The record gives the reactivity of an RNA of 177 nucleotides to 2A3 and DMS.
For DMS the reverse transcriptase was MarathonRT.
RNA sequence: GGGAACGACUCGAGUAGAGUCGAAAAUCACGGCCGCAUAAAACUCGCUGUUCGGGACGAAAAAAUCGUGCGGGUAAUACGGCGCCUUGUGGAACCAUCCCUGAAAUACCAGUCCGGCGGACGUGACCCAAUUCAUCUCGUUCGCGAGAUGAAUUGGAAAAGAAACAACAACAACAAC
Reactivity to 2A3 in 0.01 (KOAc 150mM, MgCl2 10mM, bicine 150mM(pH8.5), 24C), signal-to-noise 1, nucleotides 027 to 126: u040c000a000c020g000g040c030c000g060c050a050u170a160a120a030a020c010u040c020g090c030u060g110u110u020c040g030g040g010a010c030g110a000a010a020a060a040a040u080c050g050u040g060c010g050g010g000u040a130a000u110a130c010g050g000c010g060c020c030u080u120g000u060g050g000a010a040c040c000a040u080c010c000c000u000g110a060a090a010u120a120c040c030a020g090u020c010c000g010g080c030g000g000a000c010g060u030g020a000c010
Reactivity to DMS in 0.01 (KOAc 150mM, MgCl2 10mM, bicine 150mM(pH8.5), 24C), signal-to-noise 2, nucleotides 027 to 126: u000c020a030c040g020g000c020c010g020c000a100u000a090a110a160a030c050u000c030g030c030u000g030u000u000c090g020g000g040a060c040g010a010a040a080a050a110a080u000c090g020u010g030c050g000g030g000u000a050a090u000a110c090g000g030c080g000c070c030u000u000g010u000g000g020a110a110c120c030a200u010c010c000c030u000g000a070a080a090u020a070c170c040a110g000u010c040c130g000g030c010g000g020a020c000g000u000g000a040c110
The RNA was probed in 150 mM KOAc, 10 mM MgCl2 and 150 mM bicine (pH 8.5) at 24 C. The data come from the RNA Mapping Database (RMDB), library OK2TST.